[RMDB]
RNA sequence: GGGAACGACUCGAGUAGAGUCGAAAACUCGAAAGAGACCUGCAUAUCUUAGGCAGAUGAAGAAGUCACGUCUGAAAAGCGAAAGCCCUAAGAUAUGCAGCUGUGAAGACUUGACGCAGAAAAUAAAGGUCAUAUAGGUGUUCGCACCUAUAUGACCAAAAGAAACAACAACAACAAC
Reactivity to DMS in 0.01 (KOAc 150mM, MgCl2 10mM, bicine 150mM(pH8.5), 24C), signal-to-noise 1, nucleotides 027 to 126: c040u010c000g000a100a160a100g010a060g000a100c120c030u000g010c000a040u000a000u000c000u010u000a000g000g000c020a010g000a020u000g040a090a050g000a070a010g000u000c050a300c000g020u000c020u040g040a130a100a030a020g030c000g020a090a080a170g020c020c000c000u010a000a000g000a000u000a000u000g040c060a000g000c070u000g010u020g000a160a120g000a010c030u000u000g070a200c100g000c070a070g020a160a100a030a070u020a010a050a080
Reactivity to 2A3 in 0.01 (KOAc 150mM, MgCl2 10mM, bicine 150mM(pH8.5), 24C), signal-to-noise 3, nucleotides 027 to 126: c010u020c020g050a030a030a010g140a020g040a050c000c000u000g000c000a000u000a000u030c000u000u010a000g000g050c010a000g000a010u030g010a090a110g080a040a010g030u060c050a020c070g000u000c010u010g110a180a100a150a010g000c010g080a050a030a010g020c000c000c000u000a020a000g010a000u000a000u010g000c000a000g010c000u010g000u000g030a050a100g010a020c030u030u050g010a000c020g000c010a020g080a060a090a010a000u260a090a070a000